The data come from the RNA Mapping Database (RMDB), library OK2TRN.
This 177-nucleotide RNA was probed chemically with DMS.
The DMS profile rests on 763 reads.
Values cover nucleotides 27 to 126.
RNA sequence: GGGAACGACUCGAGUAGAGUCGAAAAGGGGCAGCCAGAUGCUGUCAGUCAGCCUGACUCACAUCCACCCCAAACAGAGAGUAUCAAGGAUGCACCUGAGGUUUGGUCAGCCAUCGAGCUGACACAGAAGCAAAACCAGGUUCGCCUGGUUUUGCUUAAAAGAAACAACAACAACAAC
Reactivity to DMS in 0.01 (KOAc 150mM, MgCl2 10mM, bicine 150mM(pH8.5), 24C), signal-to-noise 1, nucleotides 027 to 126: g000g020g020g020c110a000g050c010c100a140g000a100u010g010c000u010g000u000c020a090g020u020c120a090g030c110c020u020g000a060c020u010c060a060c100a050u050c050c060a200c010c000c030c020a040a110a120c090a130g010a080g010a120g010u000a100u000c020a130a050g000g020a120u000g010c020a050c000c030u000g010a040g010g010u000u000u000g020g000u000c000a000g010c010c000a140u020c220g010a130g040c010u000g000a010c000a010c210a050g010